Conditions: 150 mM KOAc, 10 mM MgCl2 and 150 mM bicine (pH 8.5), 24 C. This 207-nucleotide RNA was probed chemically with DMS and 2A3. For 2A3 the reverse transcriptase was SuperScript II with manganese. For DMS the reverse transcriptase was MarathonRT.
RNA sequence: GGGAACGACUCGAGUAGAGUCGAAAACAAUUAAGGAGAGUAUGCACAUUAGCAAAAAGAAGAUGUGAUAUUUGCUCAGAAGUCUUGAAGUGGAUAUUUUGGCCUUCGUAUGGCUGAAUGGUCAAGCUUGACUCUCUCGUUUGCUCAGGGAGGCCCACCCAUGGAUUUAGUUCGCUAAAUCCAUGGGAAAAGAAACAACAACAACAAC
Reactivity to DMS in 0.01 (KOAc 150mM, MgCl2 10mM, bicine 150mM(pH8.5), 24C), signal-to-noise 2, nucleotides 027 to 156: c020a070a150u020u000a090a110g030g020a100g030a090g030u000a050u010g000c020a070c000a080u010u020a150g030c080a070a070a070a090a140g030a110a210g010a070u010g010u010g010a080u010a070u000u000u000g010c030u020c020a110g000a110a070g000u010c050u000u010g010a070a130g040u000g030g010a080u000a060u000u000u000u010g010g050c000c000u000u010c160g010u010a150u000g030g040c070u020g010a020a030u010g030g010u000c030a030a040g000c090u010u010g000a050c010u000c020u000c000u010c040g010u000u000u000g010c030u000c080a090g000g000g020a080g020g010c030c010c030a190
Reactivity to 2A3 in 0.01 (KOAc 150mM, MgCl2 10mM, bicine 150mM(pH8.5), 24C), signal-to-noise 5, nucleotides 027 to 156: c020a030a130u230u280a120a060g050g010a030g010a000g030u050a040u110g050c020a020c010a020u070u120a080g120c100a120a120a090a030a030g100a070a040g020a050u020g000u000g030a010u010a070u100u090u070g020c010u020c010a030g080a120a010g080u080c030u100u050g020a060a020g050u090g080g050a050u030a090u110u100u040u050g000g000c010c010u040u050c100g130u160a110u160g070g000c070u020g010a020a020u090g010g020u010c000a000a010g030c050u060u090g020a010c000u020c000u000c000u010c050g030u020u100u100g050c070u060c070a030g060g030g030a040g050g040c040c010c040a040